[RMDB]
RNA sequence: GGGAACGACUCGAGUAGAGUCGAAAAUCCUAAGUCACUUCCUAAGGUUCAAUGAUGGCGUUUGUCAGAUCGUCGGAAACGACGAUCUUGGAUUUAACGCUUGAGAACCGAAGGAAGUGAUAUGGAAAAGCAUCACUACGUUCGCGUAGUGAUGCAAGCAUGAAUCUAUGUUCGCAUAGAUUCAUGCAAAAGAAACAACAACAACAAC
Reactivity to DMS in 0.01 (KOAc 150mM, MgCl2 10mM, bicine 150mM(pH8.5), 24C), signal-to-noise 2, nucleotides 027 to 156: u000c000c010u010a080a240g020u000c010a000c000u000u000c000c010u000a070a300g020g000u000u020c000a070a110u010g010a170u000g020g020c010g020u010u000u020g000u000c000a030g000a020u000c000g040u000c000g010g020a100a200a300c000g020a020c000g030a010u000c000u000u010g010g000a010u000u010u000a040a000c010g010c020u000u000g000a050g010a010a050c010c010g000a300a090g010g000a010a040g030u000g000a000u000a040u020g000g000a100a090a080a130g000c000a000u000c000a000c000u000a030c010g000u020u000c300g010c030g090u000a000g000u000g000a000u000g030c010a020a040
Reactivity to 2A3 in 0.01 (KOAc 150mM, MgCl2 10mM, bicine 150mM(pH8.5), 24C), signal-to-noise 5, nucleotides 027 to 156: u030c010c000u020a080a010g020u000c000a000c000u000u000c000c010u020a030a030g020g020u020u000c070a180a210u300g020a030u090g050g000c000g020u000u000u020g010u000c000a000g000a010u000c000g020u000c010g040g040a090a120a070c010g000a000c010g000a000u000c000u010u060g010g000a000u130u110u270a000a000c000g000c000u000u000g000a000g000a010a000c000c000g000a010a000g000g000a000a000g000u000g000a000u000a030u010g030g030a020a080a040a020g000c000a000u000c000a000c000u000a010c000g040u060u140c290g010c010g140u000a000g010u010g000a000u000g000c000a000a010

The record gives the reactivity of an RNA of 207 nucleotides to DMS and 2A3.
The RNA was probed in 150 mM KOAc, 10 mM MgCl2 and 150 mM bicine (pH 8.5) at 24 C.
For 2A3 the reverse transcriptase was SuperScript II with manganese.
The DMS profile rests on 3,872 reads.
As a SHAPE reagent, 2A3 marks flexible, mostly unpaired nucleotides at the ribose 2'-OH.